An RNA of 177 nucleotides, treated with 2A3 and DMS and read out base by base. The 2A3 profile rests on 2,275 reads. It was measured as part of the RMDB library OK2TRN. Reactivities are given for positions 27 through 126. DMS adducts were read by reverse transcription with MarathonRT. Reactivities are rounded to 0.1 and cut off at 0 and 3.
[RMDB]
RNA sequence: GGGAACGACUCGAGUAGAGUCGAAAAUGGUCACGAUGUCUCCUAUGUGCGAUGUCAAGUCGAGGGCCAACGAAAAGAGCCAGCGGAUCAUAGGCCGAACUCUUCGUGGUACAUGGGGAUGAACUGGUCAUCCACUGACGUUCGCGUCAGUGGAUGAAAAAGAAACAACAACAACAAC
Reactivity to 2A3 in 0.01 (KOAc 150mM, MgCl2 10mM, bicine 150mM(pH8.5), 24C), signal-to-noise 2, nucleotides 027 to 126: u080g040g000u050c020a010c070g100a080u120g010u040c010u020c050c030u090a030u010g030u000g000c060g130a060u050g150u200c100a060a090g050u050c010g080a080g000g140g000c000c020a000a030c020g040a040a100a000a020g040a010g060c030c010a030g040c000g020g020a020u050c050a090u130a090g150g000c000c040g020a100a080c000u000c030u100u050c030g040u090g070g000u010a040c020a040u030g000g020g020g010a010u030g020a060a050c040u030g060g000
Reactivity to DMS in 0.01 (KOAc 150mM, MgCl2 10mM, bicine 150mM(pH8.5), 24C), signal-to-noise 3, nucleotides 027 to 126: u040g020g020u000c030a030c060g020a250u020g010u010c020u000c010c020u000a030u000g040u020g040c050g000a050u000g010u010c180a050a070g030u000c070g000a240g000g020g020c010c040a140a100c220g000a040a040a110a140g000a110g020c120c100a090g030c020g000g010a170u000c090a100u000a150g000g020c030c000g000a070a100c060u000c040u000u000c020g010u000g000g020u000a040c040a030u000g020g000g000g000a080u000g000a090a200c160u000g020g000